[RMDB]
RNA sequence: GGGAACGACUCGAGUAGAGUCGAAAAGCUAUGGUGCAACUCUUUAAGGCAAUAACGAACUAAUUCUAAGCAAGUAAUGGAGAUAUGCCAGGGUCACUAUCUAGCCAUAAUAGUGCUUGACAGUAUGAGAAUCUGCUACCCUUCGGGGUAGCAGAAAGAGCGAUAUUAACUUCGGUUAAUAUCGCUCAAAAGAAACAACAACAACAAC
Reactivity to 2A3 in 0.01 (KOAc 150mM, MgCl2 10mM, bicine 150mM(pH8.5), 24C), signal-to-noise 3, nucleotides 027 to 156: g030c030u040a020u090g040g010u020g020c010a060a070c020u070c040u100u190u240a130a050g010g020c020a060a060u090a230a040c090g050a020a030c060u060a100a080u110u050c030u080a200a080g040c080a050a020g130u100a030a100u160g100g020a060g000a050u130a030u060g000c000c000a010g000g000g000u020c000a000c020u010a010u070c010u040a010g040c000c010a020u030a100a080u030a140g080u030g030c050u040u000g050a090c010a030g090u100a060u200g080a060g000a060a090u020c000u000g010c000u000a000c000c000c000u000u040c100g000g000g000g000u000a000g000c000a000g000a000a000a000
Reactivity to DMS in 0.01 (KOAc 150mM, MgCl2 10mM, bicine 150mM(pH8.5), 24C), signal-to-noise 1, nucleotides 027 to 156: g010c010u000a050u010g040g020u000g020c000a060a070c050u010c010u010u000u000a020a070g030g050c070a120a120u000a070a120c070g000a090a120c080u010a070a100u010u000c080u010a130a160g020c010a040a170g030u010a090a150u000g010g000a140g000a140u000a060u000g040c020c020a100g000g000g000u010c010a040c020u000a040u000c030u000a050g000c070c070a070u020a080a100u010a060g020u000g000c000u010u000g000a070c040a120g040u010a120u000g020a120g010a030a260u000c000u000g010c000u000a030c000c000c010u000u000c260g000g040g000g040u000a000g090c000a010g000a000a020a110
An RNA of 207 nucleotides, treated with 2A3 and DMS and read out base by base. Reactivities are given for positions 27 through 156. Values are in units of 0.01, from 0 to 300, in steps of 10. The RNA was probed in 150 mM KOAc, 10 mM MgCl2 and 150 mM bicine (pH 8.5) at 24 C. Source: RMDB library M2RFPK, as collected in RNAgym. For DMS the reverse transcriptase was MarathonRT.